[RMDB]
RNA sequence: GGGAACGACUCGAGUAGAGUCGAAAAUACUACGCGGCCUCCCACCUCUCUGCCCGGAGCCGGCCGCCCGCCCAGAGACCCGGCCGGCUGCCACCGUCGCUUGGUCGACGACCCGCCGCGCCAACAAGUAUAUGAAAUGGUUCGCCAUUUCAUAUACAAAAGAAACAACAACAACAAC
Reactivity to DMS in 0.01 (KOAc 150mM, MgCl2 10mM, bicine 150mM(pH8.5), 24C), signal-to-noise 3, nucleotides 027 to 126: u010a100c080u000a060c060g030c020g000g000c020c040u010c010c020c010a110c070c040u000c010u000c010u010g020c020c030c050g000g010a070g010c010c010g010g030c000c010g000c090c040c050g020c040c030c050a170g000a100g000a090c090c090c060g010g000c010c000g000g010c000u000g000c020c040a080c130c040g010u000c030g010c030u010u010g030g020u000c010g000a050c010g000a110c080c050c040g020c040c010g000c060g010c030c060a050a080c130a050a130
Reactivity to 2A3 in 0.01 (KOAc 150mM, MgCl2 10mM, bicine 150mM(pH8.5), 24C), signal-to-noise 1, nucleotides 027 to 126: u020a030c040u030a030c040g010c000g040g000c000c000u060c000c020c010a040c010c010u050c010u020c050u070g020c000c030c020g040g000a020g030c000c010g000g000c000c010g000c000c000c040g080c000c020c030a100g030a030g000a190c020c020c020g010g000c000c000g020g000c020u010g050c010c010a030c020c020g040u030c000g000c090u110u180g130g000u150c000g000a020c020g010a040c000c010c000g000c000c010g020c060g000c030c000a050a060c050a080a050